Structure probing data (DMS and 2A3) for a 177-nucleotide construct. For 2A3 the reverse transcriptase was SuperScript II with manganese. The reactions ran in a buffer of 150 mM KOAc, 10 mM MgCl2 and 150 mM bicine (pH 8.5), at 24 C. Source: RMDB library OK1LIB, as collected in RNAgym.
[RMDB]
RNA sequence: GGGAACGACUCGAGUAGAGUCGAAAACUAUGUACAGACAGUACAGUGGAUAAGGUCUUUCGAUAUCCAACUAUAACAAUGGUACUUGCAGUGGUAUCUAUCAAGAUAGGCAGGCUAUCAUAGAAAGAAGAUUUGUAUUAUUCGUAGUACGAAUCUUAAAAGAAACAACAACAACAAC
Reactivity to DMS in 0.01 (KOAc 150mM, MgCl2 10mM, bicine 150mM(pH8.5), 24C), signal-to-noise 9, nucleotides 027 to 126: c020u000a060u020g010u000a010c010a130g010a120c270a150g000u000a010c010a030g010u010g000g010a020u000a020a040g010g010u000c010u000u000u000c010g010a100u000a000u000c000c010a040a090c040u010a030u040a130a100c140a050a220u000g000g010u000a020c010u000u000g000c020a140g020u040g020g010u000a010u000c000u000a110u050c260a070a040g010a010u000a020g010g000c020a020g000g000c180u000a010u000c010a020u000a020g010a010a020a020g000
Reactivity to 2A3 in 0.01 (KOAc 150mM, MgCl2 10mM, bicine 150mM(pH8.5), 24C), signal-to-noise 3, nucleotides 027 to 126: c020u030a050u100g000u000a010c010a090g210a040c030a030g050u000a000c000a000g010u000g020g000a010u010a050a040g070g020u020c010u010u000u010c000g010a010u000a000u000c000c000a050a060c040u060a040u030a130a030c040a030a010u010g000g000u000a000c000u000u010g000c010a040g040u100g120g040u050a000u000c000u010a180u080c060a060a000g010a020u010a010g020g000c010a000g010g000c020u010a000u000c010a000u010a040g010a000a010a000g020